[RMDB]
RNA sequence: GGGAACGACUCGAGUAGAGUCGAAAAUUGUCAUGUUUCGACAUGACAAACAUAAGAUGUAGACAAAAACGGCCAAAAAGUCUAGAUCAAAUAAAGGCCGAAGACUAGGUUAGUUCGCUAACCUAAACUCCAAUAUUGCCUUCGGGCAAUAUUGGAGAAAAGAAACAACAACAACAAC
Reactivity to 2A3 in 0.01 (KOAc 150mM, MgCl2 10mM, bicine 150mM(pH8.5), 24C), signal-to-noise 1, nucleotides 027 to 126: u020u000g000u020c000a000u020g080u000u060u090c220g100a000c010a000u000g000a010c000a000a060a000c050a030u230a050a090g110a150u110g100u200a000g000a020c020a030a100a060a050a030c040g010g000c000c000a000a190a030a060a000g000u020c000u000a120g020a300u080c050a150a000a000u110a050a100a000g000g000c000c000g020a030a000g060a020c050u030a000g020g000u010u000a010g000u000u100c150g040c090u000a000a000c010c000u000a040a000a000